[RMDB]
RNA sequence: GGGAACGACUCGAGUAGAGUCGAAAAUUUCUUACAGUUGACGGUGUGCAAUAUUAUUGCUACACGUCUAAGGACACUUUAGAUGAUAUCUUACAACAGGCUAAUAAGUCUGUUGGUAUUAUAUCUACACGCCCAGCGUUCGCGCUGGGCAAAAGAAACAACAACAACAAC
Reactivity to 2A3 in 0.01 (KOAc 150mM, MgCl2 10mM, bicine 150mM(pH8.5), 24C), signal-to-noise 2, nucleotides 027 to 129: u000u000u030c000u000u000a060c060a120g020u080u090g120a000c000g080g040u040g000u000g010c000a000a010u080a060u260u050a110u040u280g000c060u070a030c010a030c010g000u000c000u000a030a030g060g010a000c010a000c140u160u050u090a110g050a070u140g020a010u030a010u000c020u010u010a000c000a000a000c010a000g000g040c000u030a130a140u150a300a000g000u010c000u010g000u000u020g000g020u000a040u000u000a000u000a000u000c000u050a010c100a000c050